An RNA of 177 nucleotides, treated with 2A3 and DMS and read out base by base.
Source: RMDB library M2PK50, as collected in RNAgym.
The reactions ran in a buffer of 150 mM KOAc, 10 mM MgCl2 and 150 mM bicine (pH 8.5), at 24 C.
RNA sequence: GGGAACGACUCGAGUAGAGUCGAAAAGAAGUUGUGUUCGCACAACUUCAAAAGCUAGUAGGUACUGCGCAAGUAGUACCUAGUAGUAGCCCGUUCAAGUAAAAAUCAACCUCUUCGGAGGUUGAAAGCUUAAUGUGAGGUUCGCCUCACAUUAAGCAAAAGAAACAACAACAACAAC
Reactivity to 2A3 in 0.01 (KOAc 150mM, MgCl2 10mM, bicine 150mM(pH8.5), 24C), signal-to-noise 1, nucleotides 027 to 126: g000a010a000g000u000u000g020u020g020u080u090c140g070c050a000c010a010a010c010u000u000c010a000a000a000a030g010c010u040a010g020u000a010g160g000u000a000c010u020g020c010g000c070a080a060g010u000a000g010u000a010c000c000u000a000g000u000a000g000u010a000g030c000c030c000g010u170u210c140a100a050g030u080a160a120a000a020a050u020c000a010a020c000c010u000c030u090u110c300g080g010a000g000g000u000u000g000a010a000a000
Reactivity to DMS in 0.01 (KOAc 150mM, MgCl2 10mM, bicine 150mM(pH8.5), 24C), signal-to-noise 2, nucleotides 027 to 126: g000a000a000g010u000u000g030u000g020u000u010c300g020c010a000c000a000a000c000u000u000c000a020a060a080a270g010c000u010a000g000u000a010g020g030u000a010c000u010g020c010g010c300a130a180g000u000a010g000u000a000c010c000u000a000g010u000a000g000u000a080g010c010c000c000g000u010u000c230a090a100g010u010a030a070a070a080a170u010c000a020a000c000c000u000c000u000u030c130g010g010a020g000g000u000u020g000a010a030a100